An RNA of 177 nucleotides, treated with 2A3 and DMS and read out base by base. For 2A3, 1,343 sequencing reads were counted. For 2A3 the reverse transcriptase was SuperScript II with manganese. Reactivities are given for positions 27 through 126.

RNA sequence: GGGAACGACUCGAGUAGAGUCGAAAAGGGCGGAGCCUGUUUCCGCGCCGGCGCGCGGGUAUAAGAACGGGGCCCCGGAGUCCACGGACAUACCGCCCGGCUCGAUCGCUGCCGCGCCGCAGGGUGAGCAUCCUGAUCAGUUCGCUGAUCAGGAUGCAAAAGAAACAACAACAACAAC
Reactivity to 2A3 in 0.01 (KOAc 150mM, MgCl2 10mM, bicine 150mM(pH8.5), 24C), signal-to-noise 2, nucleotides 027 to 126: g050g000g010c090g010g040a110g060c000c080u080g030u010u060u030c000c000g040c000g000c020c050g110g010c110g000c010g000c020g010g040g060u140a120u010a090a080g040a030a020c030g000g010g010g030c040c010c020c010g040g020a030g000u020c020c020a010c060g030g000a010c020a020u070a090c000c000g020c000c000c000g010g010c010u000c020g050a100u090c040g010c200u070g030c040c010g050c020g000c000c040g000c010a050g000g030g040u040g020a020
Reactivity to DMS in 0.01 (KOAc 150mM, MgCl2 10mM, bicine 150mM(pH8.5), 24C), signal-to-noise 1, nucleotides 027 to 126: g050g020g030c000g000g000a120g010c030c020u040g020u000u000u000c000c000g000c000g080c010c040g000g000c080g060c050g060c000g000g000g000u020a090u040a080a110g060a050a170c000g000g010g040g000c040c030c060c120g000g000a010g010u010c050c030a100c300g000g040a060c000a150u020a050c020c010g010c000c000c020g040g020c090u000c040g010a040u010c070g010c040u020g000c100c050g000c080g000c020c010g000c170a070g020g000g000u020g000a250